[RMDB]
RNA sequence: GGGAACGACUCGAGUAGAGUCGAAAAGCUCUUUUCGAAGAGCCACGAUCCUAAGUCGCAUUUGAUGACCCACAUAUCUUCAACAGCGCUCGGAAACGAGCGACAUGAAGUAAGUGUGGCAAGAAUGCGAUAUGGAGAAUAAUCGCUUCGGCGAUAAUCUUAAGAUUUUGUUCGCAAAAUCUUAAGAAAAAGAAACAACAACAACAAC
Reactivity to DMS in 0.01 (KOAc 150mM, MgCl2 10mM, bicine 150mM(pH8.5), 24C), signal-to-noise 2, nucleotides 027 to 156: g030c010u000c000u000u000u000u000c140g050a050a030g010a000g040c000c030a040c060g020a140u000c000c000u000a070a290g040u000c000g000c000a050u000u000u000g010a180u000g020a120c300c000c010a000c020a030u000a300u000c010u000u010c000a040a120c110a140g010c020g010c000u010c010g040g010a110a140a280c040g020a030g010c010g010a010c060a300u010g000a030a000g000u000a060a180g000u000g020u000g000g000c000a080a130g000a010a000u000g000c030g000a010u000a140u000g000g010a120g000a140a120u000a100a030u000c000g020c000u000u000c300g020g000c010g020a030u010a080a130
Reactivity to 2A3 in 0.01 (KOAc 150mM, MgCl2 10mM, bicine 150mM(pH8.5), 24C), signal-to-noise 6, nucleotides 027 to 156: g010c000u000c000u040u060u060u110c210g140a030a010g000a000g000c000c010a070c080g100a090u030c010c000u060a110a070g020u000c000g000c010a010u000u010u040g200a240u130g060a150c020c040c000a000c000a010u100a070u070c000u000u000c010a090a110c040a170g040c000g000c000u000c000g030g050a100a100a070c020g010a010g020c000g020a020c000a060u060g010a000a000g020u030a120a120g030u000g030u070g000g000c010a050a050g010a000a000u000g000c000g000a000u000a020u040g010g010a050g050a080a130u280a140a010u030c010g000c030u060u090c260g120g000c000g000a010u050a040a080
The record gives the reactivity of an RNA of 207 nucleotides to DMS and 2A3.
The data come from the RNA Mapping Database (RMDB), library RNAMAK.
The DMS profile rests on 3,457 reads.
Conditions: 150 mM KOAc, 10 mM MgCl2 and 150 mM bicine (pH 8.5), 24 C.
DMS adducts were read by reverse transcription with MarathonRT.
Values cover nucleotides 27 to 156.